[RMDB]
RNA sequence: GGGAACGACUCGAGUAGAGUCGAAAACUACCGGUCUACGGACCGGUAGAAACGGGAAAACGGCCUCCCGGAAAGAUAAGGCGGAUUCCGUCCAAGCGCCGAACGAGCUAGCUACGGCUAGCUCGAACUGCGUGGCUAUAUUCGUAUAGCCACGCAGAAAAGAAACAACAACAACAAC
Reactivity to 2A3 in 0.01 (KOAc 150mM, MgCl2 10mM, bicine 150mM(pH8.5), 24C), signal-to-noise 3, nucleotides 027 to 126: c000u000a010c000c030g000g000u000c010u060a140c290g120g000a000c000c000g000g000u000a000g000a000a000a000c000g010g000g040a010a110a000a060c000g010g000c000c000u000c000c060c000g020g040a080a140a010g120a120u300a160a130g000g010c120g080g040a300u250u140c050c000g000u070c000c030a010a030g020c060g000c120c040g000a000a000c010g000a000g000c010u010a000g000c000u020a030c300g090g000c000u020a000g000c010u010c000g000a010a000
Reactivity to DMS in 0.01 (KOAc 150mM, MgCl2 10mM, bicine 150mM(pH8.5), 24C), signal-to-noise 1, nucleotides 027 to 126: c000u000a000c000c000g000g010u000c010u000a170c130g030g000a000c050c000g080g030u020a000g000a020a040a040c010g000g000g000a000a000a020a030c050g000g000c010c010u000c000c010c000g010g000a030a040a130g000a130u040a090a220g000g000c050g010g000a290u030u020c050c040g040u030c030c030a060a090g000c110g000c000c000g020a210a300c030g010a020g060c000u000a000g000c000u000a070c140g030g010c000u000a000g000c030u000c030g000a020a090